Chemical mapping of a 177-nucleotide RNA with DMS and 2A3. DMS adducts were read by reverse transcription with MarathonRT. The RNA was probed in 150 mM KOAc, 10 mM MgCl2 and 150 mM bicine (pH 8.5) at 24 C. Values cover nucleotides 27 to 126. 2A3 adducts were read by reverse transcription with SuperScript II with manganese.
RNA sequence: GGGAACGACUCGAGUAGAGUCGAAAACACCUCGAUGUCGGCUCAUCGCAUCCUGGGGCUGGAGCAGGUCCCAAGGGUACGGCUGUUCGCCGUUUAAAGCGGUACGCGAGCUGGGUUCAGAACGUCGAUGUUAGAAACUCUUCGGAGUUUCUAACAUAAAAGAAACAACAACAACAAC
Reactivity to DMS in 0.01 (KOAc 150mM, MgCl2 10mM, bicine 150mM(pH8.5), 24C), signal-to-noise 3, nucleotides 027 to 126: c140a160c030c010u000c030g000a010u010g010u010c020g000g000c010u010c020a060u010c020g010c020a030u000c010c000u010g010g010g000g010c030u010g000g020a110g010c190a140g000g010u000c010c000c000a020a050g010g020g030u000a010c000g000g000c070u010g030u030u030c130g010c020c000g000u000u020u020a030a060a080g010c010g010g000u010a090c170g030c100g000a030g020c010u000g010g000g000u010u000c130a110g000a120a080c030g000u000c020g000
Reactivity to 2A3 in 0.01 (KOAc 150mM, MgCl2 10mM, bicine 150mM(pH8.5), 24C), signal-to-noise 7, nucleotides 027 to 126: c080a040c000c000u010c000g010a010u040g050u060c000g010g010c010u000c030a030u060c020g000c010a000u020c000c010u010g000g000g020g000c010u090g050g100a180g170c150a090g060g010u020c000c000c030a060a080g020g000g000u030a010c010g020g010c030u080g130u160u130c080g010c000c000g000u010u040u060a070a050a000g010c010g020g030u080a060c100g040c080g070a010g000c010u030g040g010g000u110u140c080a070g020a100a010c010g010u010c010g020